[RMDB]
RNA sequence: GGGAACGACUCGAGUAGAGUCGAAAAGCUUCAGAUUUAGAAGAAGGUGAAUCAGAGUGCAUUUCUGAGACUUCAACUGAACAAGUUGACGUUUCUCAUGAGACUUCUGACGACGAGUGGGCUGCUGCGUGAAACCUAACUUCGGUUAGGUUUCACGAAAAGAAACAACAACAACAAC
Reactivity to DMS in 0.01 (KOAc 150mM, MgCl2 10mM, bicine 150mM(pH8.5), 24C), signal-to-noise 1, nucleotides 027 to 126: g000c000u000u000c040a110g010a170u000u000u020a120g020a180a090g010a110a100g010g030u030g010a200a060u010c010a060g020a030g000u000g010c050a090u000u020u000c060u010g000a010g020a050c000u000u000c010a000a000c010u010g010a120a110c270a110a010g020u000u000g000a000c040g000u000u010u000c010u020c090a040u010g000a180g000a060c020u000u010c040u010g030a060c110g010a210c110g010a080g000u010g000g010g010c020u000g040c100u000g020